[RMDB]
RNA sequence: GGGAACGACUCGAGUAGAGUCGAAAAGUUGGGGGGGAGAUGGGCUUACCUACGGGAAUCCCUGGGUCCCCCUGAUGUCCAGUCCCUCCCCCGUCCGAGAGAAGGGAGACUCCGGAACUCCUGCCAUUCAUGUCUAAUAGUUCGCUAUUAGACAUGAAAAAGAAACAACAACAACAAC
Reactivity to 2A3 in 0.01 (KOAc 150mM, MgCl2 10mM, bicine 150mM(pH8.5), 24C), signal-to-noise 1, nucleotides 027 to 126: g110u090u050g000g000g040g020g000g020g030a060g000a070u030g010g010g000c000u020u070a180c010c000u010a050c130g040g010g020a040a110u090c000c000c020u080g000g050g090u070c050c020c010c010c000u010g010a000u010g030u000c000c020a020g220u080c000c010c000u030c000c000c010c000c000g050u000c020c000g110a150g000a010g000a150a100g030g000g000a050g010a000c020u030c050c000g000g030a020a010c010u000c020c000u020g090c020c020a020u000
Reactivity to DMS in 0.01 (KOAc 150mM, MgCl2 10mM, bicine 150mM(pH8.5), 24C), signal-to-noise 2, nucleotides 027 to 126: g010u010u000g010g000g020g030g010g010g010a060g020a170u010g010g020g010c110u000u000a090c040c030u000a030c260g030g010g000a120a070u000c000c020c050u000g000g020g010u010c000c000c000c000c030u000g010a010u000g000u000c050c060a070g000u010c010c010c000u010c000c010c010c010c020g000u010c050c020g000a180g010a060g010a170a080g000g000g010a100g000a110c010u000c080c020g000g010a100a090c040u000c010c010u000g030c120c130a140u010